Conditions: 150 mM KOAc, 10 mM MgCl2 and 150 mM bicine (pH 8.5), 24 C. The record gives the reactivity of an RNA of 177 nucleotides to DMS and 2A3. 2A3 adducts were read by reverse transcription with SuperScript II with manganese.

[RMDB]
RNA sequence: GGGAACGACUCGAGUAGAGUCGAAAACAUACGGACUUCGGUCCGUAUGAAAGAACCUCAAAUUGACGCAAACUUCCGCGUCAUCGCGAGGUAGCGAGGAAAAAAUCGAGGUGUUCGCACCUCGAAAGAUUCUGACACUGUUCGCAGUGUCAGAAUCAAAAGAAACAACAACAACAAC
Reactivity to DMS in 0.01 (KOAc 150mM, MgCl2 10mM, bicine 150mM(pH8.5), 24C), signal-to-noise 2, nucleotides 027 to 126: c030a010u000a000c000g000g000a000c000u000u000c220g020g000u000c000c000g020u000a000u000g000a070a090a070g000a100a050c000c000u000c020a060a280a060u010u010g000a010c020g010c030a070a130a220c280u010u000c190c160g020c000g000u000c020a010u020c090g000c300g000a000g000g020u000a030g000c030g010a110g000g000a000a010a130a060a200a030u010c000g020a000g020g040u000g000u020u000c150g020c000a060c000c000u000c000g020a000a010a060
Reactivity to 2A3 in 0.01 (KOAc 150mM, MgCl2 10mM, bicine 150mM(pH8.5), 24C), signal-to-noise 2, nucleotides 027 to 126: c000a000u010a000c000g020g000a000c010u030u050c170g040g010u000c000c000g000u000a000u000g000a010a000a000g050a020a020c010c000u000c000a030a060a040u020u010g000a010c010g000c040a060a160a290c200u240u110c170c110g000c000g030u010c000a010u050c010g010c020g020a000g040g010u010a020g070c050g070a130g090g120a150a100a010a040a010a020u040c000g000a000g020g000u030g000u050u030c110g010c030a000c000c000u000c010g000a010a000a000
For 2A3, 2,567 sequencing reads were counted.